[RMDB]
RNA sequence: GGGAACGACUCGAGUAGAGUCGAAAAACUGGUAACAGGUGGUAGCGGUUACAUUGGUAGUCAUACCUGUGUGCAAUUGAUUGAAGCUGGCUAUCAGCCAGUUAUCCUCGACAAUCUUUGUAAUAGCGAUAAUGUCUUCUUUCGAGAAGACAUUAUCAAAAGAAACAACAACAACAAC
Reactivity to 2A3 in 0.01 (KOAc 150mM, MgCl2 10mM, bicine 150mM(pH8.5), 24C), signal-to-noise 7, nucleotides 027 to 126: a000c020u020g010g020u070a090a060c040a170g070g090u020g020g020u040a010g030c030g010g050u080u020a010c010a040u030u050g070g000u030a040g090u140c070a100u030a060c000c010u010g020u000g000u020g010c040a100a150u120u170g070a130u080u120g050a170a030g020c010u090g140g000c000u070a040u190c040a030g040c000c000a000g000u000u020a020u030c000c020u050c030g020a030c040a060a110u040c000u100u090u080g070u090a140a190u040a180g080c040
Reactivity to DMS in 0.01 (KOAc 150mM, MgCl2 10mM, bicine 150mM(pH8.5), 24C), signal-to-noise 9, nucleotides 027 to 126: a070c040u000g010g010u010a100a100c140a090g010g020u000g010g010u000a040g020c050g010g000u000u000a030c020a050u000u000g000g010u000a020g010u010c300a120u000a030c020c010u000g010u000g010u000g020c130a080a090u010u010g010a070u000u010g010a190a110g010c000u000g010g020c000u000a050u010c110a100g010c000c000a010g000u000u000a050u000c030c020u000c110g020a100c100a050a050u000c090u000u000u000g000u010a080a130u000a090g010c270